This 177-nucleotide RNA was probed chemically with 2A3 and DMS.
Reactivities are given for positions 27 through 126.
The data come from the RNA Mapping Database (RMDB), library OK2TRN.
For 2A3, 34,981 sequencing reads were counted.
The DMS profile rests on 24,803 reads.
The reactions ran in a buffer of 150 mM KOAc, 10 mM MgCl2 and 150 mM bicine (pH 8.5), at 24 C.
2A3 adducts were read by reverse transcription with SuperScript II with manganese.
[RMDB]
RNA sequence: GGGAACGACUCGAGUAGAGUCGAAAAGGGCACGGCAAGCGUAGCGCAGGAGGCAGCAGGAUCAGACAGCCGGACAGGGAAAACUGCAGCAGCCUGUCCAAUGCUCACAACAUGCCUUCCAUGGCAACAUCAAAGACUUAUUCGUAAGUCUUUGAUGAAAAGAAACAACAACAACAAC
Reactivity to 2A3 in 0.01 (KOAc 150mM, MgCl2 10mM, bicine 150mM(pH8.5), 24C), signal-to-noise 9, nucleotides 027 to 126: g030g010g010c020a010c030g020g000c080a060a030g020c030g130u130a020g030c030g000c080a020g010g050a020g030g000c010a000g020c010a010g030g040a040u080c010a020g150a210c020a010g060c040c030g020g010a020c020a030g030g010g030a040a130a040a080c070u120g020c020a040g010c010a010g050c010c000u010g000u010c000c010a010a020u090g000c010u030c030a070c010a050a070c010a060u070g000c000c000u110u090c060c020a050u100g030g000c020a030a030
Reactivity to DMS in 0.01 (KOAc 150mM, MgCl2 10mM, bicine 150mM(pH8.5), 24C), signal-to-noise 9, nucleotides 027 to 126: g010g000g020c030a050c070g010g010c070a080a070g000c070g020u000a070g020c170g010c050a090g010g010a070g010g010c030a040g010c050a060g000g010a090u000c100a090g000a110c110a070g020c060c190g000g010a050c040a040g010g000g000a060a060a080a130c080u010g010c060a070g010c060a120g010c000c000u000g000u000c050c020a080a060u010g000c020u010c070a060c120a060a070c120a080u010g010c010c000u000u010c070c090a090u000g010g010c060a080a190